Description
An RNA of 177 nucleotides, treated with 2A3 and DMS and read out base by base. For DMS, 874 sequencing reads were counted. For DMS the reverse transcriptase was MarathonRT. For 2A3 the reverse transcriptase was SuperScript II with manganese. Values cover nucleotides 27 to 126. For 2A3, 2,360 sequencing reads were counted.
RNA sequence: GGGAACGACUCGAGUAGAGUCGAAAAGAUCUCCGGUUCGCCGGAGAUCAAAGAAGUCACAACCGCUUCCUGACGUGGCAGAUUGAAUUAUUGGAGCAAAAAAAAUCGUUCCCUUCGGGGAACGAAACACUCUAAAGUCGUUCGCGACUUUAGAGUGAAAAGAAACAACAACAACAAC
Reactivity to 2A3 in 0.01 (KOAc 150mM, MgCl2 10mM, bicine 150mM(pH8.5), 24C), signal-to-noise 2, nucleotides 027 to 126: g000a000u000c000u000c010c000g050g010u020u020c180g040c080c010g010g000a000g000a000u000c000a000a010a000g000a050a000g020u020c010a000c000a070a040c060c150g040c060u220u080c020c020u030g000a010c040g020u010g030g000c000a050g080a200u150u280g090a170a160u200u080a060u080u230g030g040a020g000c080a000a020a000a000a020a000a000a140u020c010g010u000u000c000c000c010u000u010c070g060g000g000g010a010a010c000g000a010a000a000
Reactivity to DMS in 0.01 (KOAc 150mM, MgCl2 10mM, bicine 150mM(pH8.5), 24C), signal-to-noise 1, nucleotides 027 to 126: g030a000u010c010u000c010c000g020g000u000u010c240g000c010c000g020g000a000g000a010u000c000a020a100a230g000a210a160g000u000c020a010c060a050a100c110c080g020c020u010u070c010c030u000g010a080c240g000u000g000g010c040a130g000a220u010u000g000a130a100u030u010a080u010u010g000g000a080g000c090a000a000a000a000a030a060a170a140u000c000g010u000u000c000c000c000u000u010c130g030g000g010g020a000a000c010g000a000a060a090